[RMDB]
RNA sequence: GGGAACGACUCGAGUAGAGUCGAAAACUGGUCAAAAGCAGAGUGAGAAAAUAGUUGAAGAGCUUCGUCGUAUCUCAGAGACUGAACUUCAUAAGCAUGCUCCACACCAGACUCAACUAACAGGUUCCUGUCCUGUGUAACAAAGAUCACUCUACUAUGCUUUUAUGGGUUUCGACCCAUAAAAGCAAAAAGAAACAACAACAACAAC
Reactivity to 2A3 in 0.01 (KOAc 150mM, MgCl2 10mM, bicine 150mM(pH8.5), 24C), signal-to-noise 2, nucleotides 027 to 156: c010u000g030g000u060c020a030a020a020a090g040c030a020g090a090g060u020g020a040g100a040a090a030a090u120a010g020u010u030g030a070a030g010a050g020c050u070u020c030g150u010c040g020u110a120u040c050u010c030a010g030a000g010a030c010u040g040a040a030c040u040u020c030a030u020a120a030g030c000a010u080g010c000u000c000c010a040c000a020c020c020a020g020a110c020u050c070a000a060c050u060a030a000c010a020g060g000u110u110c020c000u070g090u090c000c000u040g000u030g100u100a050a050c030a120a080a050g050a030u130c080a020c060u100c010u120a010c020u100a070
Reactivity to DMS in 0.01 (KOAc 150mM, MgCl2 10mM, bicine 150mM(pH8.5), 24C), signal-to-noise 2, nucleotides 027 to 156: c020u010g010g000u000c020a100a080a070a050g000c030a010g040a080g000u000g020a080g000a120a080a070a120u010a070g010u000u030g020a200a220g010a100g000c030u000u000c030g000u030c070g020u000a070u000c050u000c010a200g000a280g020a030c050u000g040a040a080c070u000u010c090a060u000a050a160g010c070a120u000g000c000u000c010c020a100c000a050c050c080a110g010a050c050u000c030a050a110c070u000a080a070c120a070g000g000u010u010c020c070u000g000u010c000c050u000g000u010g010u000a070a080c060a040a030a110g020a180u010c010a030c030u000c000u000a050c050u010a270